[RMDB]
Structure probing data (2A3 and DMS) for a 177-nucleotide construct. The 2A3 profile rests on 3,728 reads. For DMS the reverse transcriptase was MarathonRT. Source: RMDB library TTRDEL, as collected in RNAgym. For 2A3 the reverse transcriptase was SuperScript II with manganese. Conditions: 150 mM KOAc, 10 mM MgCl2 and 150 mM bicine (pH 8.5), 24 C.
RNA sequence: GGGAACGACUCGAGUAGAGUCGAAAAGAUAUGGAUAGUAGCAUCGAUCGUACGGCCUCGGAAACGAGGUUACGGGAGCUACGUCCUAAGUCAAACAGGAAUGCUCUCUUCGGAGAGCAUUCCUGAAUCCACAUAUAGCGUUCGCGCUAUAUGUGGAAAAAGAAACAACAACAACAAC
Reactivity to 2A3 in 0.01 (KOAc 150mM, MgCl2 10mM, bicine 150mM(pH8.5), 24C), signal-to-noise 2, nucleotides 027 to 126: g030a000u090a030u100g020g000a000u080a290g030u000a000g010c040a270u300c080g170a130u080c030g030u000a050c120g180g010c000c000u000c010g030g000a040a080a030c010g030a000g000g000u030u030a000c010g040g000g010a020g000c010u020a010c000g000u000c000c000u010a080a010g060u030c040a050a050a120c000a010g000g030a010a000u010g000c000u000c000u000c030u090u250c300g010g000a000g000a000g000c030a000u000u000c010c000u000g000a000a000
Reactivity to DMS in 0.01 (KOAc 150mM, MgCl2 10mM, bicine 150mM(pH8.5), 24C), signal-to-noise 4, nucleotides 027 to 126: g000a030u000a300u000g000g010a000u000a060g040u000a000g020c000a300u010c140g010a080u000c020g010u010a080c300g000g000c010c000u010c000g010g000a090a080a220c010g010a000g010g020u000u000a000c010g000g000g000a020g010c000u000a000c010g000u000c010c000u000a060a060g010u000c030a100a110a280c000a000g000g010a020a000u000g000c000u000c000u000c000u010u020c220g010g000a000g000a020g000c000a000u000u000c000c000u010g010a020a090